[RMDB]
RNA sequence: GGGAACGACUCGAGUAGAGUCGAAAAUGAUUGAGCGUAGCACACACUCAGACUGUACGACAGUCUGACACACACCUACGCUAGUGCAUCGUGUGUGUGAUAUGGAUGUAGCACGAAAAUGAAGUAACCAUGUUUAGAGCUUCGGCUCUAAACAUGGAAAAGAAACAACAACAACAAC
Reactivity to 2A3 in 0.01 (KOAc 150mM, MgCl2 10mM, bicine 150mM(pH8.5), 24C), signal-to-noise 2, nucleotides 027 to 126: u260g060a100u170u150g040a030g030c000g000u020a010g010c050a010c000a000c000a000c040u010c000a020g020a010c010u030g020u130a100c150g070a040c210a000g000u000c000u000g020a000c000a000c010a000c000a000c010c020u060a030c020g000c030u010a010g080u100g040c030a070u020c040g000u000g010u000g020u000g010u020g080a040u020a050u180g050g000a040u020g040u110a020g000c030a010c020g030a070a020a010a090u220g040a070a020g050u030a070a050
Reactivity to DMS in 0.01 (KOAc 150mM, MgCl2 10mM, bicine 150mM(pH8.5), 24C), signal-to-noise 3, nucleotides 027 to 126: u010g000a080u010u020g020a180g000c000g010u000a050g000c050a020c040a030c110a120c120u010c000a020g010a000c000u000g020u010a110c300g000a160c020a000g000u010c000u000g000a060c070a020c020a050c020a010c090c030u000a020c040g030c020u000a060g010u010g030c100a090u010c080g000u010g000u010g000u000g020u000g000a190u000a070u010g020g010a140u000g010u000a110g040c010a030c020g010a040a060a090a080u010g010a060a080g000u010a070a110